[RMDB]
RNA sequence: GGGAACGACUCGAGUAGAGUCGAAAAGGAUUCUUUUAGGUAUCUAUCGAAACCAUUCUGAUGAUCAAUACAGUAUUUUUGUCGCAUUCUUAUUACGGUACGUGCAAACAUUAGUUUCCAAGCGGAAACAGUGUCUUACUUUCGAGUAAGACACUGUAAAAGAAACAACAACAACAAC
Reactivity to 2A3 in 0.01 (KOAc 150mM, MgCl2 10mM, bicine 150mM(pH8.5), 24C), signal-to-noise 9, nucleotides 027 to 126: g040g010a070u040u060c030u040u160u090u140a060g090g030u080a060u040c040u020a070u070c050g070a110a040a040c030c020a080u080u040c040u060g080a100u040g020a030u100c050a080a040u100a130c030a020g100u100a180u040u080u030u090u100g070u060c030g000c050a040u130u010c040u080u110a180u110u140a060c060g030g010u030a020c040g050u060g040c020a030a040a020c010a060u060u080a030g010u000u010u000c020c010a060a030g100c060g060g050a050a060
Reactivity to DMS in 0.01 (KOAc 150mM, MgCl2 10mM, bicine 150mM(pH8.5), 24C), signal-to-noise 7, nucleotides 027 to 126: g000g000a100u000u000c020u000u010u000u010a050g010g010u010a060u020c010u000a080u000c080g000a030a060a100c060c040a110u020u010c020u010g000a050u010g000a080u020c050a050a090u010a050c070a070g000u010a020u010u000u010u010u000g000u000c080g020c080a060u010u000c050u000u000a080u020u010a050c070g010g000u000a020c090g000u000g000c110a060a050a070c070a040u010u000a060g000u000u000u000c000c010a100a120g010c110g010g010a100a070